[RMDB]
Chemical mapping of a 207-nucleotide RNA with 2A3 and DMS.
RNA sequence: GGGAACGACUCGAGUAGAGUCGAAAAGAGUUCGGUUAGAGCGACAAGUAUUUAGCUUGAGAUAGCUAAAUCACCUCGGUAUGAUUAGGGUGAGACCUAGGAACCGUAGGGGUAUUCUCAAAGGAAGGUUACCGAACAACCUUCGGGUUGUUCGGAAUACACGUGUAAGUUUCGACUUACACGUGUAAAAAGAAACAACAACAACAAC
Reactivity to 2A3 in 0.01 (KOAc 150mM, MgCl2 10mM, bicine 150mM(pH8.5), 24C), signal-to-noise 3, nucleotides 027 to 156: g090a000g020u070u080c020g030g100u120u150a010g000a020g090c020g020a030c050a040a020g050u100a060u010u020u010a000g000c010u020u020g020a020g000a050u170a020g010c000u000a000a020a000u000c020a020c010c000u020c010g020g010u270a230u210g030a040u020u050a040g030g000g010u030g090a100g030a070c010c010u010a000g020g000a020a030c030c000g010u070a040g000g000g000g000u030a090u100u080c050u010c000a050a090a010g100g010a060a030g060g040u080u110a080c000c000g000a010a010c000a000a000c000c000u040u060c170g030g010g000u000u000g000u000u000c000g000g000a000a000
Reactivity to DMS in 0.01 (KOAc 150mM, MgCl2 10mM, bicine 150mM(pH8.5), 24C), signal-to-noise 2, nucleotides 027 to 156: g000a090g020u000u000c040g000g000u020u000a090g010a100g000c040g020a040c040a030a050g010u000a030u000u000u000a020g010c000u000u010g000a270g000a150u000a030g000c000u000a000a020a050u010c030a060c020c010u000c030g000g000u000a120u000g010a240u000u000a020g000g000g000u000g030a300g000a230c010c010u000a040g010g000a120a060c030c000g020u000a060g040g010g000g010u000a050u020u010c020u000c050a110a050a150g000g010a100a080g000g020u000u000a160c000c000g010a020a020c000a000a010c010c010u010u010c280g050g020g020u010u000g000u000u010c040g020g000a010a060
Source: RMDB library M2RFPK, as collected in RNAgym. 2A3 adducts were read by reverse transcription with SuperScript II with manganese. Conditions: 150 mM KOAc, 10 mM MgCl2 and 150 mM bicine (pH 8.5), 24 C.